[RMDB]
RNA sequence: GGGAACGACUCGAGUAGAGUCGAAAAUUUUUCUUAAGUGGAUAGCCUGAUGUUCUGUAAGGUUAUUUUUAGUGCCAGAGCAAGUUAUUGAUAAUUAUCUACAACUAGAGAAGGUAAGAUAAAAGCAAUAAAUUAGGCGAUUCGUCGCCUAAUUUAUAAAAGAAACAACAACAACAAC
Reactivity to DMS in 0.01 (KOAc 150mM, MgCl2 10mM, bicine 150mM(pH8.5), 24C), signal-to-noise 2, nucleotides 027 to 126: u020u010u000u020u030c000u010u000a100a090g030u030g000g020a030u010a050g010c010c010u010g000a100u020g020u010u010c100u000g010u030a300a060g000g010u030u000a020u020u000u020u010u010a050g030u010g000c030c030a030g010a100g000c050a020a070g000u010u000a090u020u010g000a110u020a100a070u000u020a060u000c000u000a050c080a010a080c080u010a100g000a100g000a070a100g000g000u010a030a060g000a020u000a020a010a060a080g010c120a040
Reactivity to 2A3 in 0.01 (KOAc 150mM, MgCl2 10mM, bicine 150mM(pH8.5), 24C), signal-to-noise 2, nucleotides 027 to 126: u020u070u030u010u000c010u040u110a210a000g020u180g190g000a000u000a020g000c000c000u040g010a020u120g160u170u050c090u040g080u050a040a050g010g010u030u000a010u000u050u010u000u060a060g020u080g140c020c020a050g030a070g090c020a160a020g010u180u270a070u220u290g030a090u050a180a090u070u080a040u000c000u030a040c000a270a100c090u110a100g000a030g040a240a020g030g010u060a110a000g020a000u160a050a060a090a010g060c060a000